[RMDB]
RNA sequence: GGGAACGACUCGAGUAGAGUCGAAAACAGGGCCUCCAGCACGUUCCGUAUACCAGGCAGGUCCAGAUUGGCGAACGGCUCGUCGAGCACCAGGUAGGCGGGCUCCAUCACGAGCACUCCUGCAAUCUGAACUAGUAGGGUUCGCCCUACUAGUUCAAAAAGAAACAACAACAACAAC
Reactivity to DMS in 0.01 (KOAc 150mM, MgCl2 10mM, bicine 150mM(pH8.5), 24C), signal-to-noise 3, nucleotides 027 to 126: c110a110g000g010g020c030c010u000c040c050a120g000c150a140c090g000u000u010c040c050g010u000a070u010a100c110c040a080g020g020c130a080g010g060u010c040c000a070g010a120u030u010g010g020c100g000a080a160c090g000g010c020u010c010g000u010c020g000a050g000c060a150c040c040a080g000g000u010a050g000g000c070g020g010g020c010u000c010c130a070u010c190a140c160g010a020g000c010a050c040u000c010c030u000g000c070a100a050u000c100
Reactivity to 2A3 in 0.01 (KOAc 150mM, MgCl2 10mM, bicine 150mM(pH8.5), 24C), signal-to-noise 2, nucleotides 027 to 126: c020a020g020g020g030c000c000u030c040c000a010g030c050a030c060g050u090u040c030c030g020u110a110u080a260c040c000a020g000g040c100a030g030g000u000c020c000a020g090a100u100u120g070g010c070g010a020a030c020g060g000c010u010c010g060u020c000g050a020g000c010a090c020c010a000g130g100u050a040g020g000c050g010g000g010c000u010c000c010a090u110c040a030c070g000a000g000c010a010c010u000c000c000u030g000c000a040a080u030c090
Overview:
Chemical mapping of a 177-nucleotide RNA with DMS and 2A3. Reactivities are given for positions 27 through 126. 2A3 adducts were read by reverse transcription with SuperScript II with manganese. DMS adducts were read by reverse transcription with MarathonRT.